Source: RMDB library OK2TRN, as collected in RNAgym. This 177-nucleotide RNA was probed chemically with 2A3 and DMS. For DMS the reverse transcriptase was MarathonRT. In probing experiments dimethyl sulfate is read out at A N1 and C N3, which are open when not base-paired. The RNA was probed in 150 mM KOAc, 10 mM MgCl2 and 150 mM bicine (pH 8.5) at 24 C.

[RMDB]
RNA sequence: GGGAACGACUCGAGUAGAGUCGAAAAGACGCUGUGGCUCGACGAUGCGGUCAACGCUGACGUGAAGCAGACGUCAUGCGGAUAGCAACGGUGCUCUUCGAUGACUAGCCUGCUGUUUCGGCAGGAAUCAUGAAACGUUGUUCGCAACGUUUCAUGAAAAAGAAACAACAACAACAAC
Reactivity to 2A3 in 0.01 (KOAc 150mM, MgCl2 10mM, bicine 150mM(pH8.5), 24C), signal-to-noise 4, nucleotides 027 to 126: g010a010c020g000c020u000g000u040g090g010c000u060c050g000a020c020g090a180u240g160c130g090g000u040c020a050a020c030g010c020u030g010a000c010g010u030g060a100a020g080c100a040g030a140c000g000u000c000a020u210g020c000g050g070a170u150a040g000c000a000a040c020g000g070u030g050c040u000c010u000u060c070g120a120u130g050a050c050u030a020g080c000c000u010g010c010u030g050u140u090u170c060g010g000c000a000g020g000a020a040
Reactivity to DMS in 0.01 (KOAc 150mM, MgCl2 10mM, bicine 150mM(pH8.5), 24C), signal-to-noise 4, nucleotides 027 to 126: g000a040c040g000c010u000g020u000g010g010c010u000c180g010a060c040g010a140u010g020c180g010g010u000c020a190a170c030g010c000u010g020a030c030g010u010g010a120a090g020c250a130g000a030c020g000u000c000a000u010g030c000g000g000a080u010a040g010c010a030a050c040g000g010u000g000c120u000c020u010u000c070g010a110u020g000a110c060u020a140g000c010c000u020g000c000u000g010u010u010u010c080g000g030c000a020g000g000a090a100
For DMS, 4,051 sequencing reads were counted.